[RMDB]
RNA sequence: GGGAACGACUCGAGUAGAGUCGAAAAAUCAGCACCUCAAAGGGUCGAUGAGACGACAUGAGCUCAGUCACUGCAAUGCAGCGAUUCAAAAAUGAUAGCGCAACUUCUUCGCCGCAAAUCGACACUGCUGUGACUUUGGCUUCGGCCAAAGUCACAGAAAAGAAACAACAACAACAAC
Reactivity to 2A3 in 0.01 (KOAc 150mM, MgCl2 10mM, bicine 150mM(pH8.5), 24C), signal-to-noise 1, nucleotides 027 to 126: a000u060c050a000g110c000a070c000c000u140c090a040a050a160g080g000g000u010c000g070a090u120g050a040g000a000c000g000a000c120a130u300g000a010g030c010u000c060a000g010u060c000a030c040u000g030c020a020a000u220g000c020a040g000c010g000a080u120u200c270a170a020a000a000a080u130g110a100u040a040g000c020g000c090a050a040c070u040u060c000u150u000c050g010c050c000g040c040a020a020a020u100c000g020a000c000a010c000u050g000